[RMDB]
An RNA of 177 nucleotides, treated with DMS and read out base by base. The reactions ran in a buffer of 150 mM KOAc, 10 mM MgCl2 and 150 mM bicine (pH 8.5), at 24 C. Reactivities are given for positions 27 through 126. The DMS profile rests on 902 reads.

RNA sequence: GGGAACGACUCGAGUAGAGUCGAAAAAAUGAAGGACAAGACUGCCAAUCCAGAAAUCAUUUGUUUGAGAUGUUCUUCUUUGAGGCUAAGUUUGAUUGCUUAACAGAUUGCAACAGUUAGAUGGUGAGUAGUACGUCGAGUUCGCUCGACGUACUACAAAAGAAACAACAACAACAAC
Reactivity to DMS in 0.01 (KOAc 150mM, MgCl2 10mM, bicine 150mM(pH8.5), 24C), signal-to-noise 1, nucleotides 027 to 126: a040a070u020g000a060a080g010g010a030c030a060a100g020a190c030u000g000c040c010a020a110u010c030c080a050g020a130a140a090u000c030a040u000u000u010g000u000u000u000g010a060g010a140u000g000u010u000c040u000u000c000u010u000u000g010a110g000g000c020u000a080a000g030u000u000u010g000a080u050u000g000c050u000u000a080a020c090a050g010a110u000u000g000c040a010a090c070a080g000u000u000a050g010a040u000g020g000u000g000a150